[RMDB]
RNA sequence: GGGAACGACUCGAGUAGAGUCGAAAAGCUUAUUGUGAGGUAUUAUGUAGCAACAAACCGAAGACUAGAUGUAUGUACCUUAUAGCAACAUAUAUCAGAAACAUAGUAUUGAAUGGGGAAAGUAGAAACAAUUCAGAUGGUUCGCCAUCUGAAUUGUAAAAGAAACAACAACAACAAC
Reactivity to DMS in 0.01 (KOAc 150mM, MgCl2 10mM, bicine 150mM(pH8.5), 24C), signal-to-noise 3, nucleotides 027 to 126: g020c040u000u000a080u000u000g020u000g000a170g000g010u000a030u000u000a020u010g010u000a070g000c050a100a110c150a040a080a100c150c050g020a080a100g000a130c070u000a060g000a010u000g020u000a020u000g000u010a070c150c090u010u010a090u010a090g000c100a070a030c000a010u000a030u000a010u010c010a090g000a110a090a090c060a040u000a030g020u010a060u000u000g010a080a090u010g000g000g000g010a070a030a040g010u010a060g010a110a100
Reactivity to 2A3 in 0.01 (KOAc 150mM, MgCl2 10mM, bicine 150mM(pH8.5), 24C), signal-to-noise 2, nucleotides 027 to 126: g020c040u090u130a030u140u230g070u100g070a010g000g010u010a040u080u020a010u050g040u060a010g060c050a010a040c040a140a090a050c070c060g150a140a010g040a040c030u030a020g000a040u040g010u050a020u000g040u020a070c010c000u160u100a220u130a130g000c020a040a040c000a000u000a000u000a000u010c040a000g100a010a020a000c030a040u060a030g010u030a010u050u150g070a070a070u100g000g010g000g040a150a070a020g070u140a030g100a020a180